About this RNA
An RNA of 177 nucleotides, treated with DMS and 2A3 and read out base by base. Source: RMDB library OK2TST, as collected in RNAgym.

RNA sequence: GGGAACGACUCGAGUAGAGUCGAAAAUCGCGCCCGAUGGACACAUAAUCGGCCGAGUUCUGCGCAUGGGUGAUGCGUGCCACGUCCUGUUCGAUGAUCGGGCCUUCAUCGAGAUUGGCGGUGACAAGCCAAAAUCAGGAUUCGUCCUGAUUUUGGCAAAAGAAACAACAACAACAAC
Reactivity to DMS in 0.01 (KOAc 150mM, MgCl2 10mM, bicine 150mM(pH8.5), 24C), signal-to-noise 2, nucleotides 027 to 126: u000c030g000c150g000c070c010c000g010a060u000g000g000a090c120a120c190a110u010a130a070u000c060g000g000c020c020g010a080g010u010u010c100u010g000c030g000c070a040u000g010g010g020u000g000a110u000g010c090g020u000g010c000c020a090c060g000u000c020c060u000g010u010u010c020g000a050u000g000a040u000c100g020g010g020c030c040u000u010c010a010u000c000g000a050g000a090u010u000g000g000c030g010g000u010g010a050c150a090a130
Reactivity to 2A3 in 0.01 (KOAc 150mM, MgCl2 10mM, bicine 150mM(pH8.5), 24C), signal-to-noise 1, nucleotides 027 to 126: u050c020g000c030g020c000c080c020g000a050u080g070g070a040c020a000c010a290u200a100a070u050c030g020g000c010c010g020a020g070u140u000c070u050g010c000g000c010a020u050g130g000g070u160g070a080u070g010c040g010u020g030c000c010a050c050g050u010c000c000u030g030u040u050c010g010a020u020g000a020u060c020g020g040g050c010c020u010u000c010a020u000c000g040a040g030a120u040u090g000g000c010g000g000u030g040a050c060a000a080